[RMDB]
RNA sequence: GGGAACGACUCGAGUAGAGUCGAAAAGCUGUUUAGCAAAGACUCGACCAGAGCAUCCUACUGUUCGGGAUAAGGAACAGUCCCCGCCUGAGGGUCAAAAAGGCUAAGCCUGUGAAAGAGCAGUCGAUGAAUAGCUAGGGCGGACACGGGUUCGACUCUAUUAAUAUUCGUUCGCGAAUAUUAAUAGAAAAGAAACAACAACAACAAC
Reactivity to 2A3 in 0.01 (KOAc 150mM, MgCl2 10mM, bicine 150mM(pH8.5), 24C), signal-to-noise 3, nucleotides 027 to 156: g010c020u060g080u290u300u300a040g000c030a070a060a020g020a030c010u020c010g030a060c030c030a040g000a000g000c010a040u000c010c000u010a050c000u010g000u010u000c020g000g070g100a100u130a220a110g050g000a010a010c000a010g060u080c000c000c010c050g000c000c010u020g000a000g020g000g030u040c070a000a000a000a050a000g000g000c000u000a030a010g010c010c010u020g010u020g090a190a110a100g060a040g030c020a010g030u090c040g040a120u110g040a140a120u100a060g040c020u020a020g060g020g000c010g000g030a030c030a020c070g130g000g000u060u050c020g020a040c020u000
Reactivity to DMS in 0.01 (KOAc 150mM, MgCl2 10mM, bicine 150mM(pH8.5), 24C), signal-to-noise 1, nucleotides 027 to 156: g020c010u000g020u000u000u000a140g040c010a120a110a300g000a010c000u000c000g000a040c000c030a260g030a040g000c000a160u000c010c000u000a100c020u000g030u000u000c020g020g040g030a300u000a100a100g020g010a030a040c000a060g000u000c000c020c000c100g000c040c040u020g000a110g000g030g000u000c120a000a050a160a100a060g010g010c000u000a120a190g000c010c010u020g070u000g020a090a030a100g000a220g020c040a060g000u000c050g000a210u020g030a050a220u000a120g030c130u000a090g000g000g060c020g040g000a110c040a090c140g010g030g010u010u000c020g000a180c080u000
Background:
Conditions: 150 mM KOAc, 10 mM MgCl2 and 150 mM bicine (pH 8.5), 24 C. Chemical mapping of a 207-nucleotide RNA with 2A3 and DMS. Source: RMDB library ARCHII, as collected in RNAgym. For 2A3 the reverse transcriptase was SuperScript II with manganese. For DMS, 1,456 sequencing reads were counted.